RNA sequence: GGGAACGACUCGAGUAGAGUCGAAAAUUUCCGAGUUGCUCUUCUCUCCCCCUCCGGGGUCUCCUCGAAUCGGGCUGGCUCAUCCUCGAUUGCGAGCGGCGGUCCUGAGAACUCUUAUCUUCCUGCUAGCGCACAUCGUUCGCGAUGUGCAAAAGAAACAACAACAACAAC
Reactivity to 2A3 in 0.01 (KOAc 150mM, MgCl2 10mM, bicine 150mM(pH8.5), 24C), signal-to-noise 4, nucleotides 027 to 129: u050u010u010c010c010g000a030g040u040u050g030c010u020c000u050u000c020u010c010u030c000c000c000c010c000u010c020c010g000g000g000g030u010c000u010c010c010u020c010g000a010a020u040c000g000g000g000c030u060g080g010c040u020c040a070u030c010c010u030c030g040a050u040u150g180c030g000a010g030c040g020g000c030g000g010u020c000c010u040g000a020g000a040a000c020u030c000u070u070a080u080c000u040u050c020c010u020g070c030u030a030g030c010
Reactivity to DMS in 0.01 (KOAc 150mM, MgCl2 10mM, bicine 150mM(pH8.5), 24C), signal-to-noise 5, nucleotides 027 to 129: u000u000u000c040c010g020a130g030u030u000g020c030u030c000u010u000c040u020c000u000c020c020c010c050c050u020c000c040g030g020g000g100u030c030u040c030c040u020c020g060a130a060u010c000g030g030g000c060u060g030g010c040u030c060a160u030c050c020u040c040g020a130u000u000g020c000g020a100g010c090g060g030c050g020g050u020c030c020u020g000a140g000a030a080c060u000c050u040u030a100u040c080u000u010c040c020u000g000c100u020a080g030c120